The record gives the reactivity of an RNA of 177 nucleotides to 2A3 and DMS.
Source: RMDB library OK1LIB, as collected in RNAgym.
For DMS, 74,022 sequencing reads were counted.
RNA sequence: GGGAACGACUCGAGUAGAGUCGAAAAGAGAGAGAAAGUUCAUCGAAUCUCGUUUAGAAAGAAAAGGUUCAAGUUCGAAAGAAGGAAGAAAGAAAAUAAAAUAAACGAUGAACAUAGAAGAAAGAAAAUGUGGUGCGAUGUUCGCGUUGUGCUGCGUAAAAGAAACAACAACAACAAC
Reactivity to 2A3 in 0.01 (KOAc 150mM, MgCl2 10mM, bicine 150mM(pH8.5), 24C), signal-to-noise 9, nucleotides 027 to 126: g080a000g020a010g010a010g040a050a110a010g030u010u010c010a010u010c020g040a100a080u010c030u010c040g010u040u110u090a120g060a040a130a010g090a010a090a020a030g040g010u040u020c020a050a060g020u020u030c020g040a050a040a060g030a050a020g080g060a030a080g050a060a090a010g130a040a110a030a010u220a030a080a020a010u130a020a060a010c010g010a010u020g010a010a000c010a000u030a020g110a080a030g080a060a090a010g110a010a080a020
Reactivity to DMS in 0.01 (KOAc 150mM, MgCl2 10mM, bicine 150mM(pH8.5), 24C), signal-to-noise 9, nucleotides 027 to 126: g010a090g010a070g010a090g010a090a090a120g010u000u000c010a030u010c020g010a100a110u010c030u010c060g010u010u010u010a060g010a100a100a100g010a090a070a100a100g000g010u000u000c020a020a300g000u000u000c020g000a090a090a120g010a030a020g000g010a220a080g010a030a030a110g010a070a050a050a070u030a050a050a060a080u020a050a050a100c020g000a020u010g000a010a010c020a100u030a080g010a070a080g010a060a070a090g010a060a040a040